[RMDB]
RNA sequence: GGGAACGACUCGAGUAGAGUCGAAAAUGAUAAAGGACGUAGGCUAGAGGAUCGAAGACGAUUAGAGAGACCGUUGUAGUUCUAGCAGUAAACGAUGCCGAUACCGUGGUGCGGAUAGGCGACGCGGCGAUGGACACCAGUUCGCUGGUGUCCAUCGAAAAGAAACAACAACAACAAC
Reactivity to 2A3 in 0.01 (KOAc 150mM, MgCl2 10mM, bicine 150mM(pH8.5), 24C), signal-to-noise 3, nucleotides 027 to 126: u230g010a040u120a070a040a050g060g000a010c000g000u030a020g000g000c010u000a010g000a030g060g060a080u090c050g000a080a020g030a000c030g040a070u090u210a060g030a000g020a010g000a130c010c040g020u020u030g050u030a060g000u000u000c000u030a000g000c020a060g070u100a060a100a000c050g060a050u060g020c000c000g030a000u030a150c000c000g000u060g080g040u160g030c010g010g040a090u130a140g060g040c000g010a000c030g000c000g040g000
Reactivity to DMS in 0.01 (KOAc 150mM, MgCl2 10mM, bicine 150mM(pH8.5), 24C), signal-to-noise 2, nucleotides 027 to 126: u000g040a070u020a000a120a150g000g010a030c030g000u010a080g000g030c000u000a000g000a010g000g000a060u030c020g000a130a240g040a000c000g000a060u030u050a070g000a120g000a220g030a100c020c010g000u020u000g020u000a150g000u010u030c030u030a070g020c010a070g020u000a080a080a160c050g000a040u000g080c000c000g000a120u000a020c010c020g000u010g000g000u020g000c050g030g000a060u000a090g000g000c010g000a060c090g080c000g020g000

Description: An RNA of 177 nucleotides, treated with 2A3 and DMS and read out base by base. DMS adducts were read by reverse transcription with MarathonRT. The reactions ran in a buffer of 150 mM KOAc, 10 mM MgCl2 and 150 mM bicine (pH 8.5), at 24 C.